Source information
The record gives the reactivity of an RNA of 177 nucleotides to DMS and 2A3. DMS adducts were read by reverse transcription with MarathonRT. For DMS, 2,067 sequencing reads were counted. It was measured as part of the RMDB library OK2TST. Reactivities are given for positions 27 through 126. The reactions ran in a buffer of 150 mM KOAc, 10 mM MgCl2 and 150 mM bicine (pH 8.5), at 24 C.
RNA sequence: GGGAACGACUCGAGUAGAGUCGAAAAUCAGCAACCCGAUCGUUUGACCGAAUUGUUACCGACUAUGCGGCUGCUAACGCGUUCGGCGCAAGACAUUGCCGAGAGUGCGCAGCGGGUGCUGGCCGCCAUCAAUGAGCACGUUCGCGUGCUCAUUGAUAAAAGAAACAACAACAACAAC
Reactivity to DMS in 0.01 (KOAc 150mM, MgCl2 10mM, bicine 150mM(pH8.5), 24C), signal-to-noise 2, nucleotides 027 to 126: u010c070a100g020c000a040a070c030c000c030g020a080u000c030g020u010u000u020g000a090c000c000g010a050a040u010u000g010u000u000a120c210c100g000a140c080u000a060u000g020c000g000g000c000u000g000c050u010a150a150c030g000c020g000u000u000c010g000g030c040g020c200a070a120g000a110c250a110u010u000g000c000c010g010a060g000a070g000u000g020c050g000c130a030g010c000g000g010g010u000g010c010u000g000g000c090c040g010c070c160
Reactivity to 2A3 in 0.01 (KOAc 150mM, MgCl2 10mM, bicine 150mM(pH8.5), 24C), signal-to-noise 2, nucleotides 027 to 126: u070c020a000g030c020a070a300c000c010c020g040a090u060c050g080u070u130u300g040a050c030c030g010a040a040u070u070g050u060u090a160c090c040g050a020c050u010a100u210g040c000g020g030c010u000g000c010u060a080a040c010g010c010g090u050u000c000g020g020c000g010c030a130a040g160a110c050a200u060u290g020c020c020g000a020g010a020g050u070g000c000g010c060a010g020c000g020g010g010u020g000c020u010g020g000c000c000g030c000c010